[RMDB]
The data come from the RNA Mapping Database (RMDB), library M2RFPK.
Chemical mapping of a 207-nucleotide RNA with 2A3.
RNA sequence: GGGAACGACUCGAGUAGAGUCGAAAAAGCGCGCAUACUACGAUAUGCGCGCAAUCAGAAAUCGGGAAUGAUGUUCUCCCCUGGGAUUCCAAAACCGCUGUUUCGCUGAUGACGUCUGCUUUUUUAAUCACCACCGUUUGGUUCGCCAAACGGUGAAGUUCUUCAUAGGCUUCGGCCUAUGAAGAACAAAAGAAACAACAACAACAAC
Reactivity to 2A3 in 0.01 (KOAc 150mM, MgCl2 10mM, bicine 150mM(pH8.5), 24C), signal-to-noise 1, nucleotides 027 to 156: a010g000c020g020c000g080c000a000u010a010c070u070a050c150g140a250u010a000u000g020c000g020c010g010c000a000a010u040c000a020g100a050a120a050u100c040g010g030g050a020a070u090g080a040u060g060u080u020c010u010c030c010c010c010u070g000g010g090a110u090u130c030c030a000a000a050a080c020c020g050c090u070g090u010u010u070c040g040c060u050g000a030u020g050a100c010g030u020c050u010g070c030u150u040u020u000u000u240a060a130u100c050a030c080c000a000c000c000g000u000u000u000g020g020u060u010c160g010c040c000a000a000a000c000g000g000u000g000a000a010